[RMDB]
RNA sequence: GGGAACGACUCGAGUAGAGUCGAAAAUGGAAGGACGGAAAGAGGGGAAAGGAUGAUUCAAUAUCCUUUGACUACUAACAUAUGGCCUAUUUGGGGAAGUAGACGAUGGUGCAUGGAGUCUCCUGAAGAAAAAUACAAAAUUCGUUUUGUAUUUUUCAAAAGAAACAACAACAACAAC
Reactivity to 2A3 in 0.01 (KOAc 150mM, MgCl2 10mM, bicine 150mM(pH8.5), 24C), signal-to-noise 4, nucleotides 027 to 126: u070g010g020a040a030g020g010a010c050g020g040a090a060a030g040a050g010g010g000g020a020a050a010g000g010a020u060g010a030u120u170c070a080a050u060a040u230c010c000u030u020u050g030a040c020u090a020c010u070a120a040c030a090u130a100u210g060g010c000c020u060a100u090u090u140g020g000g000g010a030a000g010u030a020g020a020c040g020a030u080g030g020u030g030c030a040u060g020g010a000g030u020c030u010c030c000u020g020a130a110
Reactivity to DMS in 0.01 (KOAc 150mM, MgCl2 10mM, bicine 150mM(pH8.5), 24C), signal-to-noise 7, nucleotides 027 to 126: u000g010g020a080a060g010g010a090c110g010g000a040a070a070g010a080g010g010g000g000a050a040a030g000g000a020u010g000a120u020u010c200a080a090u010a050u000c010c010u010u000u010g000a130c050u010a060c080u000a080a110c110a070u010a080u010g010g010c040c030u000a110u000u000u000g000g010g020g010a070a080g000u000a030g010a080c070g000a060u010g000g010u000g010c090a060u000g010g010a060g000u000c030u000c020c020u000g010a090a130

This 177-nucleotide RNA was probed chemically with 2A3 and DMS. Reactivities are given for positions 27 through 126. For 2A3 the reverse transcriptase was SuperScript II with manganese. It was measured as part of the RMDB library OK2TRN. High DMS reactivity at an A or C suggests that its Watson-Crick edge is free. The RNA was probed in 150 mM KOAc, 10 mM MgCl2 and 150 mM bicine (pH 8.5) at 24 C.